Structure probing data (DMS and 2A3) for a 177-nucleotide construct. For DMS the reverse transcriptase was MarathonRT. It was measured as part of the RMDB library OK2TST. For DMS, 1,417 sequencing reads were counted. The 2A3 profile rests on 825 reads.

RNA sequence: GGGAACGACUCGAGUAGAGUCGAAAACGAAAAUGUUCAAGUAAAAAUAAAUAACAUGGUGACGAAAACGAAUGACUAUAUAAUUCAUUUUUUGUCUAGAAUUAUAGAGGAACGAAAAAUAAAUACAAUGCAUAGAUUGAUUCGUCAAUCUAUGCAUAAAAGAAACAACAACAACAAC
Reactivity to DMS in 0.01 (KOAc 150mM, MgCl2 10mM, bicine 150mM(pH8.5), 24C), signal-to-noise 2, nucleotides 027 to 126: c010g020a070a070a080a070u000g010u010u000c030a060a090g000u020a010a070a140a090a060u000a060a100a120u010a050a080c140a050u000g010g030u000g010a020c010g000a020a030a000a090c100g000a030a020u000g000a060c140u010a100u020a100u000a110a010u000u010c000a050u010u000u000u000u020u010g000u010c050u000a080g010a090a040u000u000a010u010a050g010a050g000g010a020a030c020g050a010a050a020a090a140u000a040a050a090u000a140c190a100
Reactivity to 2A3 in 0.01 (KOAc 150mM, MgCl2 10mM, bicine 150mM(pH8.5), 24C), signal-to-noise 1, nucleotides 027 to 126: c020g020a000a040a000a150u100g020u030u000c020a030a010g050u090a010a080a160a000a000u160a000a100a060u160a080a030c050a030u130g020g120u060g000a020c070g010a000a100a000a000c010g060a030a090u040g000a050c050u010a010u010a000u030a300a100u000u040c010a060u000u150u000u080u200u170g000u000c000u000a050g070a030a050u050u060a020u070a060g050a080g000g110a000a030c020g020a040a020a020a030a000u120a020a020a060u210a020c070a000